This 207-nucleotide RNA was probed chemically with 2A3. For 2A3 the reverse transcriptase was SuperScript II with manganese. 2A3 is a SHAPE reagent: it acylates the 2'-hydroxyl of flexible nucleotides of all four kinds.

[RMDB]
RNA sequence: GGGAACGACUCGAGUAGAGUCGAAAAAACGAUCCGUUCAGAACAACAGCUGCCACUAAGACGCAGCCUGCUAGCUCCACUUUCGCCCUCGCGGCCUGAGUAGAGACCAACUAGCCGUCAGCCUGGGAGUUCCUCCGGCCCAGGAUCUGGCGUCGACGUUUAGCGAUAGCUUCGGCUAUCGCUAAACAAAAGAAACAACAACAACAAC
Reactivity to 2A3 in 0.01 (KOAc 150mM, MgCl2 10mM, bicine 150mM(pH8.5), 24C), signal-to-noise 1, nucleotides 027 to 156: a010a000c150g030a120u120c070c000g040u200u080c070a140g070a180a080c030a070a000c010a040g000c000u010g060c070c060a160c220u260a150a060g080a050c180g000c000a000g000c000c000u020g000c000u000a000g000c000u000c000c000a000c000u070u040u020c030g020c000c030c010u130c090g060c200g000g010c000c000u010g000a010g000u040a020g000a000g020a020c010c010a030a120c000u000a020g000c000c000g010u000c000a000g010c000c000u000g000g000g020a000g000u140u060c010c020u010c070c040g000g020c000c000c000a000g000g000a060u020c000u000g000g000c010g020u010c000g100a020c110